[RMDB]
RNA sequence: GGGAACGACUCGAGUAGAGUCGAAAAAUCCGUGGAUAUCGGGUGCGCACCGCUCCUCCACCGGCUGUUCUCCUUCACAGCUAUGACCCAUGCGCCGCACAGGCAGUGUCCCGCUUCGUGUGCAAAAAAAACCGCCAGUACUUCGGUACUGGCGGAAGUUUAAGGCAACGUUCGCGUUGCCUUAAACAAAAGAAACAACAACAACAAC
Reactivity to 2A3 in 0.01 (KOAc 150mM, MgCl2 10mM, bicine 150mM(pH8.5), 24C), signal-to-noise 1, nucleotides 027 to 156: a000u050c040c020g000u020g000g020a070u040a100u250c070g020g010g000u050g000c050g000c000a020c000c040g010c040u010c010c040u010c010c000a050c060c010g020g000c010u030g000u090u050c040u090c070c030u100u130c060a000c000a040g000c030u070a090u190g070a080c090c000c020a090u100g030c010g030c060c010g000c000a020c010a000g060g000c030a020g020u020g040u080c010c010c040g010c000u010u020c050g100u000g010u010g010c020a190a000a000a000a000a000a000a000c000c000g010c000c010a000g010u000a000c000u020u080c120g090g000u000a000c010u010g000g000c000g010g000a000a000